[RMDB]
RNA sequence: GGGAACGACUCGAGUAGAGUCGAAAAGGGCGCAUCGCCGAGAUCCGGCGUGACGAGAUGACCAAGGCGGCCGAGAUCCUCGGUGUCGAGCACACCUGGCUGGGCUUCGUCGACUCCGGGCUACCUAAGCCAGGAUACGGUUCGCCGUAUCCUGGCUAAAAGAAACAACAACAACAAC
Reactivity to DMS in 0.01 (KOAc 150mM, MgCl2 10mM, bicine 150mM(pH8.5), 24C), signal-to-noise 1, nucleotides 027 to 126: g000g000g030c000g000c050a110u010c050g020c020c010g050a090g010a070u000c040c020g010g020c030g000u000g000a090c110g000a130g020a140u020g000a080c100c070a060a300g010g020c020g040g050c020c000g010a060g000a140u000c060c010u010c090g010g000u000g000u000c000g010a050g040c080a030c110a050c060c060u010g000g020c020u020g020g000g030c140u000u010c000g010u000c020g000a030c030u010c040c030g010g010g000c060u020a070c180c060u010a000

This 177-nucleotide RNA was probed chemically with DMS. Reactivities are given for positions 27 through 126. The RNA was probed in 150 mM KOAc, 10 mM MgCl2 and 150 mM bicine (pH 8.5) at 24 C. It was measured as part of the RMDB library OK2TRN.